[RMDB]
The data come from the RNA Mapping Database (RMDB), library OK3TST.
An RNA of 207 nucleotides, treated with DMS and 2A3 and read out base by base.
The DMS profile rests on 5,471 reads.
The 2A3 profile rests on 2,745 reads.
2A3 is a SHAPE reagent: it acylates the 2'-hydroxyl of flexible nucleotides of all four kinds.
RNA sequence: GGGAACGACUCGAGUAGAGUCGAAAAUGAGGAUGUAUGAGUCCAGGCCGGUAAGAAACGCAUUGUUGCGGCUGGCAAACAAAAAGACGGGCACGCCAGCUUAUGAGCGGGCCUUAAAUAACGCUGUUAAGCUUUUUCGCCCUAUCAUUGCGGCCUCUACAUUCUGACUUUUCGAAGUCAGAAUGUAAAAAGAAACAACAACAACAAC
Reactivity to DMS in 0.01 (KOAc 150mM, MgCl2 10mM, bicine 150mM(pH8.5), 24C), signal-to-noise 2, nucleotides 027 to 156: u020g020a110g000g020a080u010g020u010a050u010g010a150g000u000c020c000a100g000g040c010c010g000g040u000a070a120g010a070a060a100c060g000c050a180u010u000g010u010u000g010c000g000g020c030u020g020g030c030a050a060a120c060a020a080a070a110a110g020a120c080g010g020g030c040a080c160g000c050c050a050g000c050u000u000a070u010g010a070g000c090g010g010g000c070c060u020u010a030a040a090u010a070a070c090g020c010u010g000u000u000a080a090g020c020u010u000u010u000u000c070g010c000c000c010u000a150u000c040a120u010u000g010c020g010g010c000c000u010c040
Reactivity to 2A3 in 0.01 (KOAc 150mM, MgCl2 10mM, bicine 150mM(pH8.5), 24C), signal-to-noise 4, nucleotides 027 to 156: u110g020a030g030g020a030u030g050u170a100u110g050a040g040u020c040c010a010g080g050c020c020g000g020u120a140a030g080a120a140a030c060g030c050a060u080u240g080u170u120g060c020g010g010c010u010g010g000c000a080a090a030c070a010a070a040a000a020g130a030c070g010g010g000c070a020c090g000c020c020a020g020c010u090u070a040u040g030a040g030c000g010g000g000c000c000u040u070a040a040a020u140a040a030c070g000c020u010g080u170u090a070a010g020c000u070u040u020u060u190c060g010c000c000c000u020a030u060c050a060u040u110g020c020g020g000c000c010u010c000